[RMDB]
RNA sequence: GGGAACGACUCGAGUAGAGUCGAAAAGUGUAUAGGCAAGCCGACCCUCCGCCUAUACACGAAUUAAGGAGGGUGGAGAUCUUAUGCUCGCGAUCUUACGUCACGAGCGAUGGCCUGCGGCUCGUGACGAAUCUUACGCAGGCCAUAGCGAGCUACAAUUUAUGAUACGGUUCGCCGUAUCAUAAAUAAAAGAAACAACAACAACAAC
Reactivity to DMS in 0.01 (KOAc 150mM, MgCl2 10mM, bicine 150mM(pH8.5), 24C), signal-to-noise 1, nucleotides 027 to 156: g020u010g000u010a030u010a010g020g020c020a080a100g040c020c060g010a150c020c020c000u000c030c020g000c020c010u000a030u000a020c000a000c010g020a020a050u000u000a120a170g000g010a090g000g090g030u000g000g000a100g020a070u000c020u000u000a150u000g000c040u000c020g030c040g030a090u000c110u000u000a130c160g040u000c000a040c020g000a040g030c050g010a040u000g000g000c020c020u000g030c050g010g010c030u000c000g020u010g010a130c020g000a040a030u010c140u000u000a100c030g040c020a060g030g030c020c020a060u000a030g030c010g020a040g000c040u010a070c070a100